[RMDB]
An RNA of 177 nucleotides, treated with 2A3 and read out base by base. The RNA was probed in 150 mM KOAc, 10 mM MgCl2 and 150 mM bicine (pH 8.5) at 24 C. Values cover nucleotides 27 to 126. 2A3 adducts were read by reverse transcription with SuperScript II with manganese.
RNA sequence: GGGAACGACUCGAGUAGAGUCGAAAAGAAAAGAGCGUAAUCGCGUCUUGACGUGAGUGAGGCUAGACUGUAGGCUAUCCCAAGUGGGAUAGCAUAACUCACAAUACGCUGAUCUACAGUCAAAAGAGCCGCUAUUAGGUUUCGACCUAAUAGCGGCAAAAGAAACAACAACAACAAC
Reactivity to 2A3 in 0.01 (KOAc 150mM, MgCl2 10mM, bicine 150mM(pH8.5), 24C), signal-to-noise 2, nucleotides 027 to 126: g210a020a020a000a000g020a000g000c000g000u000a050a090u040c000g000c000g010u020c140u100u190g080a000c000g020u000g020a000g000u030g020a000g010g020c000u070a050g000a000c000u010g000u000a020g000g090c000u000a000u000c000c000c020a180a140g300u300g060g000g000a000u000a000g000c000a000u000a000a000c000u000c000a000c000a000a020u000a000c010g000c040u030g020a060u000c000u000a000c000a000g000u010c020a020a010a010a020g090a020